[RMDB]
RNA sequence: GGGAACGACUCGAGUAGAGUCGAAAAUUGUACACUUAUAGCAUUGGAGAAGCCUCAAGCCCCAUUGCCUAUCUGGUUUUUGUCACUACACUCACUAGUGAUUAUACGAUUACAGUCUUUGUUACUGGUACUAAGCAUGGUUCGCCAUGCUUAGUACAAAAGAAACAACAACAACAAC
Reactivity to DMS in 0.01 (KOAc 150mM, MgCl2 10mM, bicine 150mM(pH8.5), 24C), signal-to-noise 2, nucleotides 027 to 126: u000u010g010u000a050c170a090c040u000u010a040u000a050g010c020a020u010u000g000g010a110g030a100a060g040c050c080u010c200a060a220g000c020c030c000c020a030u000u000g010c110c060u000a050u000c080u010g010g010u000u010u000u000u010g010u000c010a010c010u000a020c080a120c150u000c140a080c150u000a000g020u000g020a030u000u000a060u010a070c100g010a110u000u000a160c030a020g000u000c060u000u000u010g020u000u000a020c040u000g020
Reactivity to 2A3 in 0.01 (KOAc 150mM, MgCl2 10mM, bicine 150mM(pH8.5), 24C), signal-to-noise 2, nucleotides 027 to 126: u050u040g030u040a020c040a000c010u060u030a010u030a010g010c020a040u030u020g030g000a250g040a200a030g020c020c030u120c090a020a040g010c000c010c000c030a000u000u000g000c010c000u030a040u030c050u050g060g000u020u030u010u120u220g020u000c010a010c010u010a010c050a040c100u070c030a060c030u020a010g020u000g020a000u080u080a070u030a080c060g010a030u070u090a050c020a020g020u000c060u050u130u120g050u100u050a020c010u030g030
Source: RMDB library 15KREP, as collected in RNAgym. Chemical mapping of a 177-nucleotide RNA with DMS and 2A3. The reactions ran in a buffer of 150 mM KOAc, 10 mM MgCl2 and 150 mM bicine (pH 8.5), at 24 C. For 2A3 the reverse transcriptase was SuperScript II with manganese. Reactivities are given for positions 27 through 126.